Source information
Chemical mapping of a 177-nucleotide RNA with 2A3 and DMS. High 2A3 reactivity points to a flexible backbone, as in loops and unpaired stretches. The reactions ran in a buffer of 150 mM KOAc, 10 mM MgCl2 and 150 mM bicine (pH 8.5), at 24 C. The 2A3 profile rests on 2,067 reads. For DMS the reverse transcriptase was MarathonRT. It was measured as part of the RMDB library OK1LIB.
RNA sequence: GGGAACGACUCGAGUAGAGUCGAAAAGUAUGUAUGGAUAACCAUACGUACAAAUAAUUGCCUCAUGGUGGUGGCUGGGGGCACCCUCAUGGUGGUGGGUGUGGAAAAUAAAGAUCCGAAAGGAUCAGGAUAUCAUGAUCUUCGGAUCAUGAUAUCCAAAAGAAACAACAACAACAAC
Reactivity to 2A3 in 0.01 (KOAc 150mM, MgCl2 10mM, bicine 150mM(pH8.5), 24C), signal-to-noise 2, nucleotides 027 to 126: g000u000a000u000g000u000a040u000g010g010a200u070a300a160c010c000a000u000a000c000g000u000a000c000a000a060a010u180a000a020u060u120g020c000c000u030c010a020u090g000g030u020g000g030u040g010g060c150u030g010g000g010g010g000c010a010c000c000c000u060c010a050u100g010g080u060g030g020u080g010g050g010u020g000u000g040g040a070a000a000a060u180a020a060a030g000a000u000c000c000g020a050a020a020g000g000a000u000c000a000
Reactivity to DMS in 0.01 (KOAc 150mM, MgCl2 10mM, bicine 150mM(pH8.5), 24C), signal-to-noise 2, nucleotides 027 to 126: g000u000a000u000g000u000a000u020g000g010a250u030a200a170c020c020a000u000a000c000g020u000a000c000a080a090a070u000a130a070u020u030g000c000c020u000c070a040u010g000g060u020g000g040u040g000g060c060u030g020g000g000g020g020c050a000c010c000c020u010c050a050u010g000g020u000g040g030u010g000g000g000u000g070u000g000g000a090a040a080a070u060a090a210a030g000a010u000c000c010g000a090a000a180g000g000a000u000c010a070